[RMDB]
An RNA of 170 nucleotides, treated with DMS and 2A3 and read out base by base. The RNA was probed in 150 mM KOAc, 10 mM MgCl2 and 150 mM bicine (pH 8.5) at 24 C. The DMS profile rests on 28,559 reads. Values cover nucleotides 27 to 129. Reactivities are rounded to 0.1 and cut off at 0 and 3. The data come from the RNA Mapping Database (RMDB), library 15KLIB.
RNA sequence: GGGAACGACUCGAGUAGAGUCGAAAAAAUGGGACCCAGAACUCUCUCUAGAUUCCCAGAGAGAAUCGAGAGAAAACUGGCUCUCCCUUAGCCAUCCGAGUGGACGUUGUCCUCCUUCGGAUGCCCAAUAUCGGAAUCUUCGGAUUCCGAAAAAGAAACAACAACAACAAC
Reactivity to DMS in 0.01 (KOAc 150mM, MgCl2 10mM, bicine 150mM(pH8.5), 24C), signal-to-noise 7, nucleotides 027 to 129: a160a000u050g000g010g030a000c290c000c010a000g020a040a190c190u000c030u020c020u020c020u000a130g000a030u010u010c010c030c150a200g000a070g020a110g030a010a000u000c030g000a030g000a040g020a020a030a100a200c020u020g000g020c000u030c050u020c010c030c050u000u040a000g030c200c000a010u000c000c000g020a020g000u010g020g030a020c090g010u020u070g060u000c030c030u000c060c070u000u020c030g020g010a020u000g000c010c030c010a120a110u040a080
Reactivity to 2A3 in 0.01 (KOAc 150mM, MgCl2 10mM, bicine 150mM(pH8.5), 24C), signal-to-noise 7, nucleotides 027 to 129: a000a040u110g000g000g000a020c040c000c000a010g010a030a040c010u000c000u000c000u010c020u060a070g000a020u000u010c020c040c180a060g050a000g000a020g000a120a000u010c010g000a000g000a000g000a020a030a000a030c000u000g000g010c010u010c010u000c000c000c000u000u030a030g020c000c000a000u000c000c010g000a010g030u060g010g010a040c260g150u150u290g020u110c010c020u020c020c030u040u040c010g000g000a000u000g000c000c000c000a070a050u190a110